[RMDB]
RNA sequence: GGGAACGACUCGAGUAGAGUCGAAAAAAUGCGGUAGUGAGGGGAUUUUUUGAUGCGUCUUAACGUCGCCUUCUAUUUAUUGCGUUUACUACUAAGCCAAUAAGUAAAAUACGCAACUGCACAGCUACGUGAUAGUUAAGUUCGCUUAACUAUCACGAAAAGAAACAACAACAACAAC
Reactivity to DMS in 0.01 (KOAc 150mM, MgCl2 10mM, bicine 150mM(pH8.5), 24C), signal-to-noise 4, nucleotides 027 to 126: a090a090u000g020c030g010g000u010a040g020u010g000a050g020g000g010g000a020u000u000u000u000u000u000g010a060u000g020c110g020u000c040u010u010a060a070c150g010u000c020g020c020c040u000u000c030u000a030u000u000u000a040u010u000g010c170g010u000u000u000a080c270u010a060c120u010a030a060g000c060c080a010a050u010a020a020g010u000a020a050a060a070u010a070c080g000c020a020a050c090u000g010c060a060c120a100g020c100u000a100
Reactivity to 2A3 in 0.01 (KOAc 150mM, MgCl2 10mM, bicine 150mM(pH8.5), 24C), signal-to-noise 3, nucleotides 027 to 126: a000a010u090g000c020g000g000u020a010g030u030g050a020g060g010g000g010a020u020u000u000u000u040u090g030a030u070g030c050g050u010c010u030u060a050a010c030g030u000c010g200c040c000u010u050c030u020a090u020u080u010a060u020u030g000c010g000u000u020u010a030c040u010a020c010u020a030a050g030c020c020a060a040u070a060a000g010u030a000a080a050a030u110a020c030g000c030a040a040c010u050g000c060a060c000a080g030c000u060a050
This 177-nucleotide RNA was probed chemically with DMS and 2A3.
The reactions ran in a buffer of 150 mM KOAc, 10 mM MgCl2 and 150 mM bicine (pH 8.5), at 24 C.
Reactivities are given for positions 27 through 126.
In probing experiments dimethyl sulfate is read out at A N1 and C N3, which are open when not base-paired.
For 2A3, 5,117 sequencing reads were counted.